[RMDB]
RNA sequence: GGGAACGACUCGAGUAGAGUCGAAAAGAUAUGGACGAGCUCGAUAAGAAUCAUGUCGGAAACGACAUAUUCUUUUGACGAGCGAGUCCUAAGUCAACACCGAAUAUUCCUUCGGGAAUAUUCGGAACCCUACCUAGGAGUUCGCUCCUAGGUAGGGAAAAGAAACAACAACAACAAC
Reactivity to DMS in 0.01 (KOAc 150mM, MgCl2 10mM, bicine 150mM(pH8.5), 24C), signal-to-noise 2, nucleotides 027 to 126: g000a030u000a300u000g010g010a000c030g000a300g020c000u000c000g050a170u000a020a020g000a010a000u000c170a010u020g000u000c010g000g000a090a100a160c020g010a030c000a000u020a010u020u000c000u000u010u000u030g030a150c080g000a000g010c000g010a230g000u010c000c000u000a040a040g000u010c000a150a120c190a270c000c000g000a040a010u000a010u000u000c000c000u000u000c150g030g010g000a010a000u000a000u000u000c000g010g000a010a030
Reactivity to 2A3 in 0.01 (KOAc 150mM, MgCl2 10mM, bicine 150mM(pH8.5), 24C), signal-to-noise 2, nucleotides 027 to 126: g020a010u080a040u100g000g000a010c010g000a010g000c020u000c020g050a080u060a270a020g030a040a000u080c160a010u160g000u010c000g000g010a070a050a060c010g010a000c010a010u010a010u030u010c000u020u220u060u200g270a110c000g000a000g000c010g000a010g000u000c000c000u000a020a000g050u050c020a060a070c070a090c050c010g010a000a000u010a010u020u000c000c000u050u140c280g090g000g000a010a000u000a000u000u010c020g000g000a000a000